Conditions: 150 mM KOAc, 10 mM MgCl2 and 150 mM bicine (pH 8.5), 24 C. The record gives the reactivity of an RNA of 207 nucleotides to 2A3.
RNA sequence: GGGAACGACUCGAGUAGAGUCGAAAACUUGGUGUCCCUCCCAUGCUCAUCUGCACCAAAAGUCUGGAGGGGGCUGAGGUGGCAGGGGGCUGGCAUGUCAGCACUGCCCUGAGUGCAUGCACAUCUGGCCGGGUCAUGACAGUGUCUGGGCUUGGCCCGGAACGUGUAGAUUCGUCUACACGUUCCGAAAAGAAACAACAACAACAAC
Reactivity to 2A3 in 0.01 (KOAc 150mM, MgCl2 10mM, bicine 150mM(pH8.5), 24C), signal-to-noise 4, nucleotides 027 to 156: c040u070u090g050g000u080g060u030c020c010c030u030c020c030c000a050u160g000c000u000c020a280u060c080u010g000c020a010c000c000a030a140a060a090g010u030c050u060g060g010a100g070g070g000g000g000c010u020g030a020g030g030u040g070g100c000a010g020g000g010g000g000c000u000g040g010c040a080u070g110u160c020a010g010c010a000c080u050g040c030c020c050u050g090a010g040u050g000c010a030u020g030c070a050c000a100u040c080u070g000g000c000c000g020g010g000u010c020a050u060g030a010c060a200g120u060g020u190c030u090g040g010g010c030u020u010g000g000c000c030

Reactivities are given for positions 27 through 156.